[RMDB]
RNA sequence: GGGAACGACUCGAGUAGAGUCGAAAAGAUAUGGAAUCCGUGUACAGGAGCAACAGCAUCGCUCGGAAACGAGCGAUGACAUGCUUAGUACCGGAUUCCUAAGUCAAAACACGAGUUCGCUCGUGAAGGUUAUUACUGCGUUCGCGCAGUAAUAACCAAAAGAAACAACAACAACAAC
Reactivity to 2A3 in 0.01 (KOAc 150mM, MgCl2 10mM, bicine 150mM(pH8.5), 24C), signal-to-noise 1, nucleotides 027 to 126: g020a030u050a010u150g000g030a020a020u000c060c020g140u190g030u300a010c020a010g300g240a010g010c050a030a220c060a140g030c000a000u000c000g000c000u020c000g030g010a080a070a020c020g020a000g000c000g000a010u000g010a020c000a030u040g020c020u030u040a000g010u020a000c040c010g000g030a000u000u000c000c000u000a000a000g000u010c030a020a070a070a070c030a000c010g000a020g050u140u080c190g110c170u010c000g000u040g060a040a050
Reactivity to DMS in 0.01 (KOAc 150mM, MgCl2 10mM, bicine 150mM(pH8.5), 24C), signal-to-noise 1, nucleotides 027 to 126: g000a100u010a300u000g020g020a020a010u030c010c000g030u000g000u000a000c030a130g010g010a030g000c000a050a070c280a160g000c010a080u000c000g010c000u000c010g000g010a100a120a300c000g000a010g030c010g010a000u000g020a070c090a080u000g030c030u000u000a140g020u000a010c000c010g000g000a010u000u020c000c010u000a010a040g000u010c020a090a050a180a170c000a010c030g000a010g010u000u010c170g050c000u000c000g020u000g000a050a170